[RMDB]
RNA sequence: GGGAACGACUCGAGUAGAGUCGAAAAGAUAUGGAUCUGUGCCUCCCAGACAGCACACUCCCCACCUCGGAAACGAGAGGUGUGUCGAGAGGGCAGAUCCUAAGUCAAACGCGAGUUCGCUCGCGAACUUGCCUUCACGCUUCGGCGUGAAGGCAAGAAAAGAAACAACAACAACAAC
Reactivity to DMS in 0.01 (KOAc 150mM, MgCl2 10mM, bicine 150mM(pH8.5), 24C), signal-to-noise 1, nucleotides 027 to 126: g000a000u000a240u000g000g000a020u000c000u000g000u000g020c000c010u010c000c260c070a190g010a050c290a100g000c040a020c000a140c270u000c050c010c040c040a300c090c030u000c010g000g000a060a060a200c110g000a120g000a060g000g040u000g000u000g020u020c020g010a000g010a000g010g000g000c000a020g000a000u010c000c000u000a040a050g020u050c020a110a080a300c080g020c020g040a110g050u000u050c190g000c000u000c180g050c020g010a020a080